[RMDB]
RNA sequence: GGGAACGACUCGAGUAGAGUCGAAAAAUGCCGGCGCGCAUAUCGUACGAUCGUAAUCGGCGCGCAUUAAUGCAUGCCGAUGCCGCGAUGCGCUAUAUACGCGGCUAAUAUAUUACGAUGCUAAUUAAUAACCCCGCAAAUUCGUUUGCGGGGUUAUAAAAGAAACAACAACAACAAC
Reactivity to DMS in 0.01 (KOAc 150mM, MgCl2 10mM, bicine 150mM(pH8.5), 24C), signal-to-noise 1, nucleotides 027 to 126: a080u030g010c050c040g030g000c040g110c050g000c070a030u000a030u000c080g030u000a050c140g000a030u000c020g010u000a090a020u000c000g000g000c020g030c070g030c000a060u000u000a110a110u000g030c010a020u010g000c000c000g020a130u000g020c060c060g010c000g000a120u020g000c040g020c080u000a060u010a070u000a070c020g020c000g010g000c010u020a020a040u010a130u030a070u000u000a020c060g000a060u000g000c130u000a070a060u000u030a130
Conditions: 150 mM KOAc, 10 mM MgCl2 and 150 mM bicine (pH 8.5), 24 C. The record gives the reactivity of an RNA of 177 nucleotides to DMS. It was measured as part of the RMDB library OK2TRN.